RNA sequence: GGGAACGACUCGAGUAGAGUCGAAAAGAUUCGUCAGCCGCAUGCCCAGGUGGCCGCGAUCUUCAAGGCUACGGCGCGGAUAGGUCCGCGCUGAUCGUUUUCCUCCAACGACGCUAUGGCGACUUUCAAAAUCGGCAUCGGUUCGCCGAUGCCGAAAGCACAAAUAUCUGUUCGCAGAUAUUUGUGCAAAAGAAACAACAACAACAAC
Reactivity to 2A3 in 0.01 (KOAc 150mM, MgCl2 10mM, bicine 150mM(pH8.5), 24C), signal-to-noise 2, nucleotides 027 to 156: g010a050u190u130c030g080u090c040a030g000c030c010g060c050a070u140g010c000c040c060a010g080g000u000g000g020c010c040g050c070g070a110u020c050u070u080c060a100a020g040g000c010u040a040c030g000g000c010g000c000g040g010a060u170a150g120g150u020c000c000g000c020g000c010u010g020a110u040c020g000u020u020u100u000c020c060u000c040c000a080a080c030g100a040c020g010c020u030a030u150g010g010c010g040a100c000u140u160u150c150a060a090a070a120u020c000g000g000c000a020u000c000g000g050u020u040c130g030c000c000g020a010u010g000c060c010g030a000a000a000
Structure probing data (2A3) for a 207-nucleotide construct. The reactions ran in a buffer of 150 mM KOAc, 10 mM MgCl2 and 150 mM bicine (pH 8.5), at 24 C.